Structure probing data (2A3 and DMS) for a 207-nucleotide construct. The reactions ran in a buffer of 150 mM KOAc, 10 mM MgCl2 and 150 mM bicine (pH 8.5), at 24 C.

RNA sequence: GGGAACGACUCGAGUAGAGUCGAAAACAACACAAGCAGACAUGAAGAGACGUACAUGUAGCGGACAGAAGAAACGUCGGCAACCGUCGUAAUGUCGUGAGACAUGGACAAGGAGCCAAGGCCGCGCAGCACGAACAGCUGCAACCAUGUCUGCAAACCUAGAGAGCUAGUUCGCUAGCUCUCUAGGAAAAGAAACAACAACAACAAC
Reactivity to 2A3 in 0.01 (KOAc 150mM, MgCl2 10mM, bicine 150mM(pH8.5), 24C), signal-to-noise 1, nucleotides 027 to 156: c090a020a010c050a000c020a050a060g000c000a000g010a000c000a000u010g020a020a050g080a010g030a100c000g030u060a030c030a120u060g010u100a000g020c000g000g000a020c000a060g120a040a020g040a010a120a000c000g030u000c060g010g000c000a010a010c010c010g020u000c000g090u200a030a000u020g000u000c000g000u000g030a050g000a000c030a020u020g000g010a010c020a110a130g000g000a000g010c020c000a010a040g120g000c000c000g000c010g000c000a000g030c000a000c080g180a150a030c040a050g010c030u030g000c000a010a010c000c000a000u000g000u000c000u000g000c000a010a000a010
Reactivity to DMS in 0.01 (KOAc 150mM, MgCl2 10mM, bicine 150mM(pH8.5), 24C), signal-to-noise 1, nucleotides 027 to 156: c070a080a110c040a160c100a110a300g040c070a000g000a070c000a070u010g060a150a180g000a160g010a030c000g030u010a150c090a070u000g090u000a130g000c070g060g010a180c010a210g000a030a210g000a140a050a020c160g000u000c000g010g030c000a040a160c050c010g000u010c000g060u000a060a090u000g030u000c010g030u030g030a220g000a040c030a000u000g090g000a060c000a040a130g000g000a300g000c030c060a000a160g040g030c000c000g100c050g030c000a010g000c040a130c010g000a160a120c100a150g000c000u000g010c000a030a170c030c030a000u000g010u030c000u050g060c000a000a040a040